[RMDB]
The record gives the reactivity of an RNA of 177 nucleotides to DMS and 2A3.
For 2A3 the reverse transcriptase was SuperScript II with manganese.
The DMS profile rests on 6,052 reads.
High DMS reactivity at an A or C suggests that its Watson-Crick edge is free.
DMS adducts were read by reverse transcription with MarathonRT.
RNA sequence: GGGAACGACUCGAGUAGAGUCGAAAAGAUAUGGAGCCUAGGGCUUCAACAGCUCGGAAACGAGACAUGAAGGCCUACAUGGCUCCUAAGUCAAAGUCAAACUAACUCUUCGGAGUUAGUUUGACAAGGAAAGGAUAAGGUUCGCCUUAUCCUUUCCAAAAGAAACAACAACAACAAC
Reactivity to DMS in 0.01 (KOAc 150mM, MgCl2 10mM, bicine 150mM(pH8.5), 24C), signal-to-noise 5, nucleotides 027 to 126: g010a050u000a300u000g010g000a010g000c000c000u000a090g020g000g000c000u000u000c000a030a050c130a100g000c000u010c000g010g000a130a090a220c000g000a010g000a040c150a140u010g000a080a000g010g000c000c000u000a070c210a130u000g010g000c000u000c000c000u000a010a080g000u010c050a060a090a110g000u000c000a010a000a000c000u010a000a010c000u010c000u000u010c230g020g000a020g000u000u000a010g000u000u000u000g010a000c000a050a050
Reactivity to 2A3 in 0.01 (KOAc 150mM, MgCl2 10mM, bicine 150mM(pH8.5), 24C), signal-to-noise 4, nucleotides 027 to 126: g040a010u080a040u140g000g000a000g000c000c010u010a040g020g010g050c010u020u010c010a030a070c030a010g050c000u010c020g010g020a040a100a060c020g000a010g050a020c050a090u070g020a010a000g050g120c010c000u060a090c110a200u110g010g000c000u000c000c000u000a090a010g030u010c080a140a040a040g000u000c000a010a000a000c000u000a000a000c000u000c010u070u120c300g060g000a010g010u000u010a000g000u000u010u000g000a000c010a000a010